This 177-nucleotide RNA was probed chemically with 2A3 and DMS. DMS adducts were read by reverse transcription with MarathonRT. The DMS profile rests on 1,366 reads. The RNA was probed in 150 mM KOAc, 10 mM MgCl2 and 150 mM bicine (pH 8.5) at 24 C.

[RMDB]
RNA sequence: GGGAACGACUCGAGUAGAGUCGAAAAGGCGGUCGGGCCCGGCGAGCUAACACCCGAGCAACGGCGGCAGGCCGGCCACCGAGUCGAUCACGUGGUGCGGCCGGGUCGCGCUGGCGCCGGCCAGCCACAGAGCUCAUAGGUUCGCCUAUGAGCUCUGAAAAGAAACAACAACAACAAC
Reactivity to 2A3 in 0.01 (KOAc 150mM, MgCl2 10mM, bicine 150mM(pH8.5), 24C), signal-to-noise 1, nucleotides 027 to 126: g050g020c050g010g000u020c040g000g190g040c000c040c000g010g040c030g040a060g040c020u040a110a050c050a090c070c050c090g030a020g050c040a060a100c050g050g010c010g080g060c020a070g040g040c000c000g000g000c040c010a010c000c020g000a010g100u280c070g110a130u080c010a010c140g020u010g000g120u300g150c070g000g000c000c060g030g050g000u040c000g000c020g020c050u040g020g040c100g110c000c000g000g050c000c010a020g000c000c000a010
Reactivity to DMS in 0.01 (KOAc 150mM, MgCl2 10mM, bicine 150mM(pH8.5), 24C), signal-to-noise 2, nucleotides 027 to 126: g000g010c000g020g010u000c020g010g010g020c050c010c050g030g000c020g000a090g010c050u000a070a140c170a130c060c020c040g010a080g010c040a170a160c050g010g000c010g000g030c050a100g020g010c050c020g000g000c030c000a000c020c060g000a080g000u010c190g000a170u000c030a070c140g010u000g000g020u000g010c050g000g050c040c010g000g010g020u000c010g020c070g000c060u010g010g040c140g060c000c000g020g000c000c000a100g030c000c010a140